[RMDB]
An RNA of 177 nucleotides, treated with DMS and 2A3 and read out base by base.
The reactions ran in a buffer of 150 mM KOAc, 10 mM MgCl2 and 150 mM bicine (pH 8.5), at 24 C.
Values cover nucleotides 27 to 126.

RNA sequence: GGGAACGACUCGAGUAGAGUCGAAAAGCAGUAUUCAUGUUCCUGGAAACAAUCUUGGACCCAGAAGACGCGAAGCGAUUGAAGGCAGUCUGGGCAUUCGCAGGUAUCGGAAAAACUCCUCUGGUAACUAUUAGUCUUGGUUCGCCAAGACUAAUAGAAAAGAAACAACAACAACAAC
Reactivity to DMS in 0.01 (KOAc 150mM, MgCl2 10mM, bicine 150mM(pH8.5), 24C), signal-to-noise 5, nucleotides 027 to 126: g020c080a070g020u010a100u010u010c050a070u000g020u010u000c010c020u010g020g010a070a090a110c110a110a090u000c050u000u000g000g010a150c060c020c040a060g010a090a060g020a090c110g010c030g010a090a070g010c060g010a090u000u010g010a110a070g010g010c060a080g010u000c020u010g010g010g010c120a070u000u000c050g000c020a040g000g010u000a040u010c040g000g010a040a050a060a080a090c100u000c040c030u010c070u010g010g010u000a070a190
Reactivity to 2A3 in 0.01 (KOAc 150mM, MgCl2 10mM, bicine 150mM(pH8.5), 24C), signal-to-noise 2, nucleotides 027 to 126: g030c020a020g040u090a090u090u070c060a050u210g030u030u020c010c000u010g030g050a100a150a030c060a080a200u020c030u050u090g070g020a090c010c010c020a030g040a070a040g110a030c040g000c040g100a070a020g050c040g080a100u040u230g080a060a030g080g000c040a010g030u000c020u040g020g000g000c000a020u060u070c060g020c060a010g050g000u040a050u140c020g010g020a030a040a040a060a080c030u040c010c000u020c060u030g060g010u050a080a010